[RMDB]
RNA sequence: GGGAACGACUCGAGUAGAGUCGAAAACUCGUCUGGUUCGCCAGACGAGAAAGAAAAUCCGAGCGAAGGGAAGGGCACAAACGCUCGGAGUGCCCAAUCCCAAAACGUGGGGGUUCGCCCCCACGAACGACACAUAUCAGUUCGCUGAUAUGUGUCGAAAAGAAACAACAACAACAAC
Reactivity to 2A3 in 0.01 (KOAc 150mM, MgCl2 10mM, bicine 150mM(pH8.5), 24C), signal-to-noise 3, nucleotides 027 to 126: c010u010c010g000u000c000u000g000g060u050u060c220g030c060c000a000g000a000c000g000a000g000a010a020a010g010a010a070a000a020u040c000c010g000a020g010c060g110a090a050g050g020g050a070a070g070g030g020c060a040c030a120a300a020c110g030c080u080c060g000g010a020g020u020g020c000c030c010a010a090u040c010c010c000a030a050a010a060c010g000u000g000g000g000g010g020u040u040c160g110c010c000c020c010c000a000c000g000a000a000
Reactivity to DMS in 0.01 (KOAc 150mM, MgCl2 10mM, bicine 150mM(pH8.5), 24C), signal-to-noise 2, nucleotides 027 to 126: c000u010c000g020u010c010u000g000g020u000u000c210g020c000c000a000g010a030c000g000a000g000a020a030a120g000a040a050a100a170u000c000c000g010a030g020c010g010a190a140g010g000g000a140a120g000g000g000c040a070c060a070a120a170c030g000c040u000c020g000g010a050g010u000g020c030c000c010a120a180u000c000c000c000a080a050a100a110c040g020u010g010g000g000g010g010u010u000c170g000c000c010c000c020c000a000c000g000a020a070
The record gives the reactivity of an RNA of 177 nucleotides to 2A3 and DMS. For DMS the reverse transcriptase was MarathonRT. For 2A3 the reverse transcriptase was SuperScript II with manganese. It was measured as part of the RMDB library M2PK50.